[RMDB]
RNA sequence: GGGAACGACUCGAGUAGAGUCGAAAAGAUAUGGAGAAAUCGUGAGUGCGUUGAAAUCGGAAACGAUGGAGCACUACCACGAGUUUCUCCUAAGUCAAAGUUCCUGUGGGUUCGCCCACAGGAACAACGCUACAUAUAAGUUCGCUUAUAUGUAGCGAAAAGAAACAACAACAACAAC
Reactivity to 2A3 in 0.01 (KOAc 150mM, MgCl2 10mM, bicine 150mM(pH8.5), 24C), signal-to-noise 8, nucleotides 027 to 126: g030a010u090a040u130g000g000a010g000a010a010a000u010c000g000u010g020a040g000u010g000c040g180u300u120g030a040a050a010u010c010g010g000a070a040a030c010g000a010u010g000g020a030g000c010a000c010u030a080c060c000a000c010g020a050g040u000u030u000c000u000c010c000u020a110a020g020u010c060a200a050a050g000u000u000c000c000u000g000u010g000g000g020u050u130c300g140c040c000c000a000c000a000g000g000a000a000c000a000a000
Reactivity to DMS in 0.01 (KOAc 150mM, MgCl2 10mM, bicine 150mM(pH8.5), 24C), signal-to-noise 9, nucleotides 027 to 126: g000a030u000a300u010g000g010a010g000a010a010a030u000c000g010u010g010a040g010u000g010c000g010u000u020g010a080a110a020u000c000g000g000a150a080a200c000g010a020u000g000g010a130g010c010a010c000u000a080c300c010a000c000g010a030g000u000u000u000c000u000c000c000u000a010a050g000u000c030a100a110a140g000u000u000c000c000u000g020u000g000g000g010u000u010c290g010c000c000c000a010c000a010g000g000a000a000c000a030a070